[RMDB]
RNA sequence: GGGAACGACUCGAGUAGAGUCGAAAAACAAAGACGUCGGUGGUAACCCUACUACCCAUCUGAACCGGGGAGAGAUGUACGUGCACACUUGCGCCCCCCUCCUGUCUAACAGUGAUGACAAGCGUCAUCAAACCUAGACGUUCGCGUCUAGGUUUGAAAAAGAAACAACAACAACAAC
Reactivity to DMS in 0.01 (KOAc 150mM, MgCl2 10mM, bicine 150mM(pH8.5), 24C), signal-to-noise 2, nucleotides 027 to 126: a070c100a100a050a170g000a070c060g050u000c160g020g030u000g010g000u000a080a070c120c070c090u000a040c060u000a080c060c030c010a010u000c040u000g000a070a100c200c100g010g000g010g010a150g000a060g000a020u000g020u000a010c170g040u000g000c040a050c090a090c070u000u010g000c110g030c000c000c000c000c000c000u000c020c000u000g010u000c040u000a060a070c130a080g000u010g010a010u000g010a020c050a120a130g030c140g000u000c010a040